Structure probing data (DMS and 2A3) for a 177-nucleotide construct. Conditions: 150 mM KOAc, 10 mM MgCl2 and 150 mM bicine (pH 8.5), 24 C.

RNA sequence: GGGAACGACUCGAGUAGAGUCGAAAAGAAAAUAAGCGAAGAUAGCUCAGUCGGUAGAGCAGCAGGACCGAAACCUGCAUCGAAAGGGAUCAAGACCCAGUUCGCGCAAAAACCGAAGUUAAAAAAAUCGUCAUUAUAAGUUCGCUUAUAAUGACGAAAAAGAAACAACAACAACAAC
Reactivity to DMS in 0.01 (KOAc 150mM, MgCl2 10mM, bicine 150mM(pH8.5), 24C), signal-to-noise 3, nucleotides 027 to 126: g010a080a050a030a070u000a100a100g010c020g000a110a120g000a110u000a090g000c000u000c050a030g000u010c010g000g000u000a070g010a060g000c010a130g010c000a010g000g000a080c110c090g000a080a100a070c010c000u000g000c020a080u000c020g010a030a140a060g020g000g000a060u000c210a130a130g010a120c030c010c000a080g010u000u010c010g010c180g020c140a070a050a060a060a040c040c010g010a010a070g020u010u000a000a000a010a180a050a100a050
Reactivity to 2A3 in 0.01 (KOAc 150mM, MgCl2 10mM, bicine 150mM(pH8.5), 24C), signal-to-noise 2, nucleotides 027 to 126: g030a000a040a030a130u260a060a040g030c030g050a070a010g020a210u150a100g030c000u000c050a050g060u030c000g050g010u030a020g000a000g020c050a010g000c000a000g020g020a100c050c070g100a040a020a020c000c010u000g000c020a020u020c000g040a040a030a050g020g000g010a040u180c070a080a030g070a110c010c000c000a000g020u000u030c020g000c000g040c070a000a010a000a110a000c000c000g050a040a020g070u150u150a010a190a080a060a000a010a050
Values cover nucleotides 27 to 126. The data come from the RNA Mapping Database (RMDB), library M2PK90.